[RMDB]
RNA sequence: GGGAACGACUCGAGUAGAGUCGAAAAGAAGCAUGCUUCCACCGGCGGAUGCAUGGCAGACGAAACAGCCGACCGGGAACGAUGUAUACAGGCUGGAAAGUAUUCAUCGGAAAGAAAGUCUGGAAAAGGAUUUCACUAUCUUCGGAUAGUGAAAUCCAAAAGAAACAACAACAACAAC
Reactivity to 2A3 in 0.01 (KOAc 150mM, MgCl2 10mM, bicine 150mM(pH8.5), 24C), signal-to-noise 2, nucleotides 027 to 126: g120a010a020g060c040a020u110g010c010u070u000c000c000a040c040c010g060g030c040g020g000a000u040g010c000a000u020g030g080c000a020g010a100c030g080a050a050a070c020a000g000c000c000g120a200c000c010g060g000g000a010a030c000g020a000u010g000u040a000u000a000c020a000g080g140c080u090g080g100a050a140a010g000u010a000u030u050c000a000u010c020g030g090a060a070a000g110a010a160a000g000u060c010u050g050g070a070a140a040a030
Reactivity to DMS in 0.01 (KOAc 150mM, MgCl2 10mM, bicine 150mM(pH8.5), 24C), signal-to-noise 1, nucleotides 027 to 126: g000a070a230g010c020a020u000g000c000u000u000c020c040a080c060c000g000g000c120g000g020a100u020g000c090a020u050g000g000c000a010g000a170c080g000a240a230a190c060a100g010c020c050g010a080c000c040g000g000g060a130a130c060g010a030u000g000u000a020u000a020c000a070g000g020c060u020g000g010a000a100a160g000u000a000u000u000c000a000u000c000g020g030a050a090a020g000a120a210a250g000u000c000u000g000g060a040a070a130a160
Chemical mapping of a 177-nucleotide RNA with 2A3 and DMS. 2A3 adducts were read by reverse transcription with SuperScript II with manganese. For DMS, 1,253 sequencing reads were counted. Reactivities are given for positions 27 through 126.